[RMDB]
RNA sequence: GGGAACGACUCGAGUAGAGUCGAAAAGGGGUCUUAUCCGAUCCCUUGGAUUUAGAGGUAUACUGAAGCCUCCACGGUAUACUACCCACCUUGUCAGGGAUCGUGAUAAGACGGAGGCACCCAAAGUCUAGUUUAUUGUUCGCAAUAAACUAGACAAGGGACGAUAUAAGUUCGCUUAUAUCGUCCCAAAAGAAACAACAACAACAAC
Reactivity to DMS in 0.01 (KOAc 150mM, MgCl2 10mM, bicine 150mM(pH8.5), 24C), signal-to-noise 1, nucleotides 027 to 156: g060g000g040g050u050c000u020u000a050u010c100c160g020a010u000c010c010c000u010u000g020g000a170u000u000u000a060g000a300g020g020u000a060u000a110c000u010g010a060a110g020c010c000u000c000c000a300c040g080g030u000a000u000a040c040u000a180c100c040c070a230c210c110u020u000g000u010c120a100g010g000g010a020u000c010g010u000g000a050u010a010a040g020a010c040g020g030a060g050g070c050a140c060c000c030a080a040a190g010u010c010u000a000g010u000u010u000a010u000u000g010u010u000c300g000c020a000a010u000a000a000a050c000u000a000g030a020c000a000a110
Reactivity to 2A3 in 0.01 (KOAc 150mM, MgCl2 10mM, bicine 150mM(pH8.5), 24C), signal-to-noise 4, nucleotides 027 to 156: g070g000g020g000u010c010u040u000a000u000c010c000g010a000u000c010c010c020u020u060g070g010a090u220u200u240a180g030a060g040g040u010a010u000a010c010u010g050a120a030g010c010c010u010c010c000a010c000g000g000u000a000u010a010c020u080a100c010c030c030a120c070c040u200u220g150u260c140a090g000g020g000a000u010c000g050u090g060a000u000a000a010g000a000c000g000g000a000g000g020c010a020c000c000c020a070a050a000g000u000c000u000a000g000u000u000u000a000u000u010g050u040u060c210g010c170a000a000u000a000a000a000c000u000a000g000a000c000a000a030